[RMDB]
RNA sequence: GGGAACGACUCGAGUAGAGUCGAAAAACUGUGGGCAAUCUCAAGCAUCCUUUUCUCAUUUGUAGAAAAGAACAUGUUAGUAGGUGAUUGUUCAGGUCAUGUAGACAUACACAGUGCUGUGAUGUCUCAGCAUUAUGGGUCAGGUUUCUCCCAGGCACAAAAUGACGGCAUUCGUGCCGUCAUUUUGAAAAGAAACAACAACAACAAC
Reactivity to 2A3 in 0.01 (KOAc 150mM, MgCl2 10mM, bicine 150mM(pH8.5), 24C), signal-to-noise 3, nucleotides 027 to 156: a000c110u160g010u060g090g010g000c000a010a010u000c010u010c060a030a040g000c000a000u020c000c000u010u030u010u000c020u010c030a210u130u180u300g110u300a010g000a000a000a000a000g020a010a030c040a060u030g000u070u070a130g040u080a060g080g190u080g030a000u000u000g010u000u000c000a010g030g010u100c040a060u110g090u170a000g010a020c010a010u280a080c010a040c010a050g200u190g190c180u070g010u030g000a050u020g050u000c010u010c020a030g000c020a040u030u140a060u270g010g000g020u070c120a080g070g070u010u040u010c020u010c000c010c010a060g080g000c080a020
About this RNA: Source: RMDB library OK3TST, as collected in RNAgym. Chemical mapping of a 207-nucleotide RNA with 2A3. 2A3 adducts were read by reverse transcription with SuperScript II with manganese. The reactions ran in a buffer of 150 mM KOAc, 10 mM MgCl2 and 150 mM bicine (pH 8.5), at 24 C.